Chemical mapping of a 207-nucleotide RNA with 2A3 and DMS. It was measured as part of the RMDB library OK3TST. 2A3 adducts were read by reverse transcription with SuperScript II with manganese. Values cover nucleotides 27 to 156.
RNA sequence: GGGAACGACUCGAGUAGAGUCGAAAAAGGGUGAGCUGUCACUCACAAAGGUUGAUCCAGCUACUGCCACUGCCAAAACAGAGUUCAGUGCAGAGCCUCCAAUUUGGCAUCAUCGUUGAAGGAAACCAACCAGUCAUUUCUUGACAAGAGGAUUACAGAUUCCCAAGUAAUUCGUUACUUGGGAAUCAAAAGAAACAACAACAACAAC
Reactivity to 2A3 in 0.01 (KOAc 150mM, MgCl2 10mM, bicine 150mM(pH8.5), 24C), signal-to-noise 3, nucleotides 027 to 156: a000g070g010g010u030g000a020g010c050u020g050u100c020a030c040u020c000a050c070a030a090a030g060g000u050u050g020a040u040c020c010a020g000c030u110a100c020u120g030c030c010a040c030u040g000c010c000a060a070a040a070c070a010g080a020g060u110u050c020a030g010u050g090c010a010g010a020g030c020c030u030c030c010a070a170u070u040u040g000g010c020a040u060c010a010u030c140g060u020u060g060a100a010g030g010a050a030a040c010c000a000a030c010c010a010g020u020c000a050u040u140u100c070u070u090g010a010c000a030a030g050a030g140g000a040u000u170a080c010a020
Reactivity to DMS in 0.01 (KOAc 150mM, MgCl2 10mM, bicine 150mM(pH8.5), 24C), signal-to-noise 2, nucleotides 027 to 156: a110g000g010g000u000g010a070g000c030u000g050u020c100a130c010u000c030a080c040a040a090a100g000g030u000u000g020a110u000c050c030a130g020c040u000a120c030u020g000c040c020a170c050u000g010c020c030a030a050a100a150c130a110g010a090g000u010u000c020a080g000u000g030c050a090g010a110g000c050c000u020c060c040a060a180u000u020u000g010g000c010a100u000c040a130u000c070g020u000u020g000a080a060g020g000a120a090a040c030c000a060a100c030c020a170g020u010c020a080u000u010u000c060u000u010g010a250c070a060a080g000a090g010g000a110u010u000a110c060a110